[RMDB]
The record gives the reactivity of an RNA of 207 nucleotides to DMS and 2A3.
For 2A3 the reverse transcriptase was SuperScript II with manganese.
For 2A3, 2,593 sequencing reads were counted.
For DMS, 1,984 sequencing reads were counted.
The reactions ran in a buffer of 150 mM KOAc, 10 mM MgCl2 and 150 mM bicine (pH 8.5), at 24 C.
RNA sequence: GGGAACGACUCGAGUAGAGUCGAAAAGUCCUGCCAUGAGACCGCAACGAGAGCAUGUCGCAUCGAAUGGACUCGGGGAGUCGGCAGCUUGCCCCACGGAUGAGCGCCUAAUUCCGGCAUUCGGGAAAAUAGACUGGAUAGUUCGCUAUCCAGUCAAGACAUCCAUAAUCUUCGGAUUAUGGAUGUCAAAAGAAACAACAACAACAAC
Reactivity to DMS in 0.01 (KOAc 150mM, MgCl2 10mM, bicine 150mM(pH8.5), 24C), signal-to-noise 1, nucleotides 027 to 156: g010u010c040c010u000g000c090c060a080u000g000a200g010a060c060c090g010c050a060a140c100g000a090g000a240g050c030a110u040g030u010c040g000c010a100u010c020g020a170a200u000g030g030a140c020u000c040g010g030g050g000a070g010u000c070g040g000c050a060g000c050u010u000g010c020c000c040c120a150c160g020g000a070u010g010a040g030c070g000c010c000u000a110a160u000u010c010c000g030g010c040a140u000u000c000g000g010g000a080a050a080a190u000a110g000a010c030u010g010g000a040u000a020g020u000u000c300g040c010u000a010u000c000c000a060g000u020c000a000a090
Reactivity to 2A3 in 0.01 (KOAc 150mM, MgCl2 10mM, bicine 150mM(pH8.5), 24C), signal-to-noise 3, nucleotides 027 to 156: g050u030c020c000u000g050c020c020a110u120g060a000g040a100c040c050g020c100a080a080c080g030a080g010a020g150c040a080u130g070u120c070g010c120a090u100c040g040a030a040u050g010g070a090c020u030c070g020g000g020g010a040g070u090c040g010g000c040a060g000c040u040u070g030c000c010c020c010a030c010g020g030a090u080g020a050g020c030g030c000c020u050a100a080u070u050c010c020g000g000c050a020u060u100c000g000g030g090a010a040a000a060u130a040g010a010c000u000g010g000a000u000a010g020u060u060c150g000c140u000a000u010c000c000a000g000u000c000a000a000